Conditions: 150 mM KOAc, 10 mM MgCl2 and 150 mM bicine (pH 8.5), 24 C.
This 177-nucleotide RNA was probed chemically with DMS and 2A3.
High 2A3 reactivity points to a flexible backbone, as in loops and unpaired stretches.
For DMS, 1,377 sequencing reads were counted.
For 2A3 the reverse transcriptase was SuperScript II with manganese.
RNA sequence: GGGAACGACUCGAGUAGAGUCGAAAAGAUAUGGAAUCCCUAAGAGCGAUAAGUCCCGUAUCGGAAACGAUACAGGACUUUUGACGCUUAUGGGAUUCCUAAGUCAAAAGCGACGUUCGCGUCGCAACCCUACAUCAUCCUUCGGGAUGAUGUAGGGAAAAGAAACAACAACAACAAC
Reactivity to DMS in 0.01 (KOAc 150mM, MgCl2 10mM, bicine 150mM(pH8.5), 24C), signal-to-noise 1, nucleotides 027 to 126: g000a020u000a300u010g000g020a010a000u000c000c000c000u010a130a180g010a030g020c000g020a090u000a010a010g010u010c000c010c030g020u000a010u010c010g000g000a020a040a160c000g010a030u000a000c000a010g000g000a010c000u000u000u000u000g000a150c120g000c000u010u000a300u010g000g030g000a010u000u000c000c000u000a000a060g000u010c050a100a110a120a120g020c000g010a020c020g020u000u020c260g030c010g000u010c000g020c040a110a030
Reactivity to 2A3 in 0.01 (KOAc 150mM, MgCl2 10mM, bicine 150mM(pH8.5), 24C), signal-to-noise 2, nucleotides 027 to 126: g000a000u040a010u100g000g000a000a010u040c000c000c040u110a300a270g050a010g030c060g070a140u050a300a010g010u000c000c000c010g010u000a000u000c000g000g010a050a030a050c010g000a010u000a010c030a000g000g020a000c000u000u020u010u010g030a030c020g000c010u000u010a030u080g000g010g000a000u000u030c010c000u000a010a010g040u030c020a050a000a040a230g000c000g010a010c010g000u040u240c300g030c000g190u000c000g000c000a020a040